[RMDB]
RNA sequence: GGGAACGACUCGAGUAGAGUCGAAAAGAUAUGGACGCGCCAGGAUAUUACCCAGCUUUUGACGACACCAUAUCGGAAACGAUAUCCCUGUCGAUAAGCUGGUAAUAUCCUGGCGCGUCCUAAGUCAGAAGCUAAUUAGCUUCGGCUAAUUAGCUUCAAAAGAAACAACAACAACAAC
Reactivity to DMS in 0.01 (KOAc 150mM, MgCl2 10mM, bicine 150mM(pH8.5), 24C), signal-to-noise 1, nucleotides 027 to 126: g010a060u020a300u000g010g010a010c000g060c000g030c000c000a010g010g020a030u000a000u010u010a010c220c060c070a010g000c000u000u000u000u000g020a240c100g010a020c040a040c070c160a030u000a010u000c000g010g000a150a110a260c020g000a030u000a010u000c040c050c070u000g020u000c000g010a100u000a000a020g020c020u000g000g000u010a000a000u000a000u000c020c010u010g000g000c000g000c000g020u010c000c000u000a000a020g000u010c100a120
Structure probing data (DMS) for a 177-nucleotide construct. Conditions: 150 mM KOAc, 10 mM MgCl2 and 150 mM bicine (pH 8.5), 24 C.